[RMDB]
RNA sequence: GGGAACGACUCGAGUAGAGUCGAAAAACGUGGCAUACGUGCCACGAAUUGUCAGCUAAGGAGACAGAAAAAUUAUCUACUGAUGAGACUUAGCCAAAACCACCUCUUUUAGGGGUGGUCUAGAUAAAAAACGAUAUCGUGUUCGCACGAUAUCGAACGCUCAUAUUAUCUUCGGAUAAUAUGAGCGAAAAGAAACAACAACAACAAC
Reactivity to 2A3 in 0.01 (KOAc 150mM, MgCl2 10mM, bicine 150mM(pH8.5), 24C), signal-to-noise 5, nucleotides 027 to 156: a000c010g000u000g010g000c000a010u030a070c200g100u050g000c010c000a000c000g000a010a040u100u020g050u030c030a000g010c010u020a000a010g020g020a050g020a040c040a050g240a060a050a020a010a020u160u090a060u050c040u040a070c050u060g110a110u110g030a030g010a050c000u000u010a000g010c000c010a020a060a020a010c000c000a000c000c010u020c010u050u290u090u300a090g000g000g010g000u000g000g000u010c000u000a000g000a000u100a060a120a010a010a010a020c020g000a000u000a000u000c000g010u000g030u040u050c120g020c090a000c000g000a000u000a000u000c000g000a040a000
Reactivity to DMS in 0.01 (KOAc 150mM, MgCl2 10mM, bicine 150mM(pH8.5), 24C), signal-to-noise 1, nucleotides 027 to 156: a120c020g070u020g030g000c010a060u010a050c220g040u040g030c000c000a000c010g010a040a020u010u000g000u000c040a160g000c000u000a010a040g000g020a150g000a300c040a090g040a050a130a060a110a230u020u000a160u020c050u010a300c050u000g000a060u010g000a160g000a100c000u000u000a040g000c000c030a080a090a050a020c010c000a010c000c000u000c010u010u010u000u000a090g080g020g010g040u000g010g000u000c000u000a020g030a130u090a000a070a070a070a100a160c040g010a050u000a000u020c010g010u000g020u000u000c300g000c000a040c000g000a000u000a000u000c010g010a010a040
Structure probing data (2A3 and DMS) for a 207-nucleotide construct.
It was measured as part of the RMDB library M2RFPK.
The reactions ran in a buffer of 150 mM KOAc, 10 mM MgCl2 and 150 mM bicine (pH 8.5), at 24 C.
Values cover nucleotides 27 to 156.